Structure probing data (DMS and 2A3) for a 207-nucleotide construct. The reactions ran in a buffer of 150 mM KOAc, 10 mM MgCl2 and 150 mM bicine (pH 8.5), at 24 C.

RNA sequence: GGGAACGACUCGAGUAGAGUCGAAAAGAAAAUCUCGUUCUAAAUCUGCAGAAAGGUCAGAGCAAGAUGUGGUACCUGAUGCAUUAAUAGAAAAUUAUACAGAUGUGUUUGAUGACACACAGGUUGAGAUAAUUGAUGAGGUAACGAACUAAACGAGCAACCUAUCAUCAUUCGUGAUGAUAGGUUGAAAAGAAACAACAACAACAAC
Reactivity to DMS in 0.01 (KOAc 150mM, MgCl2 10mM, bicine 150mM(pH8.5), 24C), signal-to-noise 3, nucleotides 027 to 156: g000a110a080a130a080u000c000u000c010g010u000u000c030u000a080a090a060u000c110u000g030c030a260g010a110a110a090g030g050u010c060a110g000a130g050c050a050a090g010a080u010g000u010g010g000u000a030c010c010u010g020a150u000g010c050a050u010u000a070a140u000a140g000a080a070a080a090u000u010a110u000a120c030a180g020a080u010g030u000g000u000u000u010g010a110u010g010a050c040a020c020a030c000a100g000g020u010u010g000a170g000a100u000a040a060u000u000g010a080u000g010a050g030g030u000a050a100c060g010a070a110c060u010a040a050a090c030g000a200g030
Reactivity to 2A3 in 0.01 (KOAc 150mM, MgCl2 10mM, bicine 150mM(pH8.5), 24C), signal-to-noise 5, nucleotides 027 to 156: g020a000a060a020a040u030c010u010c030g010u020u020c030u030a040a090a100u030c030u060g010c030a020g070a170a070a000g040g020u050c000a020g020a030g120c070a130a040g040a170u120g030u040g040g030u070a020c000c000u010g010a030u040g000c000a020u020u110a050a080u050a080g090a020a110a020a010u120u090a070u040a050c040a020g170a240u000g020u000g030u010u080u200g140a090u170g030a000c010a000c000a000c000a050g110g030u050u070g040a060g020a110u060a040a050u100u070g080a050u070g030a020g030g020u050a080a000c040g020a020a020c050u070a120a020a020c030g010a010g030
It was measured as part of the RMDB library OK3TST.